[RMDB]
RNA sequence: GGGAACGACUCGAGUAGAGUCGAAAAUAAAACAUGGUUACCAUAAACUAAGGCUGAAGGUAGCCAUGCAGCCUUAGUUAAUUAUAAAAGCUGAGCGUUAGGAAAAACCUAAUGCUCAGCAAAAAAACUAAAUAUCAACGUUCGCGUUGAUAUUUAGAAAAGAAACAACAACAACAAC
Reactivity to DMS in 0.01 (KOAc 150mM, MgCl2 10mM, bicine 150mM(pH8.5), 24C), signal-to-noise 1, nucleotides 027 to 126: u030a040a100a090a170c080a060u010g020g010u010u000a080c030c000a100u000a190a030a030c000u000a030a000g000g010c020u000g020a080a080g020g000u000a030g000c040c080a030u010g010c020a000g000c000c010u000u010a020g010u010u010a070a050u000u000a040u000a110a080a090a180g030c020u020g010a000g020c010g020u000u000a010g000g000a070a170a080a090a190c000c000u020a000a000u000g010c000u010c000a000g010c010a000a000a050a020a020a020a000
Reactivity to 2A3 in 0.01 (KOAc 150mM, MgCl2 10mM, bicine 150mM(pH8.5), 24C), signal-to-noise 1, nucleotides 027 to 126: u050a010a090a020a000c030a070u060g060g040u070u120a100c000c050a070u160a180a070a030c050u020a000a040g000g030c060u020g060a050a010g120g020u060a060g110c030c010a010u050g000c030a010g000c020c000u000u020a020g060u000u080a090a010u250u110a080u100a150a060a000a010g000c000u000g020a000g010c000g000u010u000a010g000g000a010a180a020a150a150c000c000u000a000a010u000g000c000u000c000a000g020c000a010a010a010a000a000a000a000